[RMDB]
RNA sequence: GGGAACGACUCGAGUAGAGUCGAAAACAGCAAUUAUUCGUAAUUGCUGAAUGGCGGACCCAGCGCGGAAGGAGCGCGCAGGACUCCUUCGCCGGCUUUUAAUAAGCAGGUACUUCGGUACCUGCAAGUGUAACAGAAUUUUCGAAUUCUGUUACACAAAAGAAACAACAACAACAAC
Reactivity to 2A3 in 0.01 (KOAc 150mM, MgCl2 10mM, bicine 150mM(pH8.5), 24C), signal-to-noise 6, nucleotides 027 to 126: c000a000g020c000a000a010u010u030a010u070u160c180g040u060a010a010u010u000g000c000u000g010a030a080u100g040g010c050g030g020a060c000c010c010a020g010c040g000c020g070g050a110a090g090g070a070g100c060g000c030g030c060a020g000g140a140c020u030c020c000u050u010c010g030c030c010g110g130c040u190u250u160u230a170a150u270a180a030g000c010a000g000g000u000a000c000u020u060c180g070g000u000a000c000c000u000g000c000a000a000
Reactivity to DMS in 0.01 (KOAc 150mM, MgCl2 10mM, bicine 150mM(pH8.5), 24C), signal-to-noise 5, nucleotides 027 to 126: c010a010g010c000a020a000u000u000a020u000u020c160g020u000a000a000u000u000g000c000u000g000a050a050u000g000g010c040g020g010a190c090c000c010a080g030c030g010c030g020g020a060a050g000g010a060g020c040g020c110g030c100a080g010g000a170c030u000c040c040u010u000c020g010c100c060g000g000c130u010u010u020u010a060a150u020a100a110g010c000a000g000g000u000a000c010u000u020c140g030g010u000a010c000c000u000g000c010a010a030